[RMDB]
RNA sequence: GGGAACGACUCGAGUAGAGUCGAAAAACGAACCUGCAAAGAGUACCGUCCGUCACGUACUCGGCAACGUCUCCUGGUACCGGGCUCGGGUCGUCAAUUACGGAUCCGGGUCUGAACGUCAGGGACCGGCAAGGCGCACCACGAUCCAUGACGAAGCGGAUAAUACUUGUUUCGACAAGUAUUAUCCAAAAGAAACAACAACAACAAC
Reactivity to DMS in 0.01 (KOAc 150mM, MgCl2 10mM, bicine 150mM(pH8.5), 24C), signal-to-noise 2, nucleotides 027 to 156: a100c080g000a060a080c010c010u000g040c070a160a080a130g000a060g000u010a030c040c030g000u010c010c070g030u030c030a220c040g000u000a020c010u020c020g000g030c040a080a030c040g000u000c010u000c000c000u000g010g030u000a070c160c020g000g020g010c030u010c000g050g010g010u000c010g000u000c060a150a130u000u010a050c060g030g000a020u000c000c000g000g030g020u000c010u000g010a040a030c080g000u010c030a080g000g040g020a040c010c010g030g000c040a080a050g010g010c030g020c040a130c050c040a120c040g000a090u000c020c000a080u010g000a100c040g040a140a090g000c210
Reactivity to 2A3 in 0.01 (KOAc 150mM, MgCl2 10mM, bicine 150mM(pH8.5), 24C), signal-to-noise 5, nucleotides 027 to 156: a000c020g020a030a060c000c020u040g020c050a140a090a070g020a010g000u030a040c060c050g040u080c030c010g030u060c060a010c030g020u030a020c010u020c030g020g000c020a080a080c060g020u010c080u060c060c000u020g010g010u060a050c090c000g000g000g010c010u000c010g000g000g020u020c010g050u040c030a050a230u270u180a120c090g100g010a010u000c000c000g000g000g000u000c000u000g000a010a000c020g010u010c000a000g000g000g010a020c020c010g030g000c020a060a090g040g000c020g010c010a030c040c000a060c030g080a040u060c040c030a110u080g010a040c050g020a060a020g110c080